[RMDB]
An RNA of 177 nucleotides, treated with DMS and 2A3 and read out base by base. Reactivities are rounded to 0.1 and cut off at 0 and 3. For DMS the reverse transcriptase was MarathonRT. For 2A3 the reverse transcriptase was SuperScript II with manganese. It was measured as part of the RMDB library OK1LIB.
RNA sequence: GGGAACGACUCGAGUAGAGUCGAAAAUUCGUUUGCUACCACAUUGGGAGUGAACAAGUGCCACGUACAGAUCAUGGACCUCGGGCACAUGUGUGACGCCACCAUGAGUUAUGAGUGCCCUAUGCUGCUCUACGUCGAGAUUCGUCUCGACGUAGAGAAAAGAAACAACAACAACAAC
Reactivity to DMS in 0.01 (KOAc 150mM, MgCl2 10mM, bicine 150mM(pH8.5), 24C), signal-to-noise 2, nucleotides 027 to 126: u010u040c080g020u000u000u000g010c000u000a090c000c000a190c270a080u060u020g000g000g000a030g010u010g000a050a010c000a090a030g000u040g000c010c030a050c190g000u050a110c040a050g020a040u020c040a240u000g010g010a030c080c010u010c090g000g030g000c000a040c020a060u000g040u050g020u000g000a170c140g010c130c030a060c020c030a050u010g000a110g000u000u000a030u050g000a100g000u000g000c000c010c030u010a030u000g000c040u000g020
Reactivity to 2A3 in 0.01 (KOAc 150mM, MgCl2 10mM, bicine 150mM(pH8.5), 24C), signal-to-noise 4, nucleotides 027 to 126: u050u010c040g010u000u000u000g020c000u060a160c000c010a110c080a260u140u260g120g020g000a010g010u020g020a030a000c010a050a020g130u060g100c010c020a050c020g060u110a020c020a050g040a140u120c050a110u080g040g030a120c020c070u040c100g000g010g010c000a000c000a010u090g110u000g030u040g090a170c140g050c050c000a000c000c010a020u030g030a010g020u080u080a190u230g020a020g010u070g030c010c000c000u030a080u130g020c010u030g000